[RMDB]
RNA sequence: GGGAACGACUCGAGUAGAGUCGAAAAAGUGCCGGAUACGUCCGGCUCAACGGGGGAUACGUGUGGUGCCGUCCGCUCCCCCUAUGGCAUAACAAAUGCACCACACACUAGGCUACGGCCUAGUGAAAAAAGGUGUAUGUGUUCGCACAUACACCAACCUAUCAGCAUGCUUCGGCAUGCUGAUAGGAAAAGAAACAACAACAACAAC
Reactivity to 2A3 in 0.01 (KOAc 150mM, MgCl2 10mM, bicine 150mM(pH8.5), 24C), signal-to-noise 2, nucleotides 027 to 156: a000g060u010g000c010c010g020g000a020u030a080c210g120u000c000c010g010g000c000u000c010a060a020c020g000g030g000g000g000a000u020a050c000g020u020g000u000g050g000u000g000c010c010g000u030c010c070g100c050u050c010c000c000c030c000u020a160u170g100g000c040a100u070a240a080c030a050a100a000u130g000c000a000c000c020a010c010a000c000a000c000u000a010g000g010c000u020a020c300g090g010c000c000u000a000g000u000g030a000a000a000a000a000a020g000g000u010g010u010a000u000g000u000g030u020u050c180g040c090a000c000a010u000a000c020a000c000c000a000a000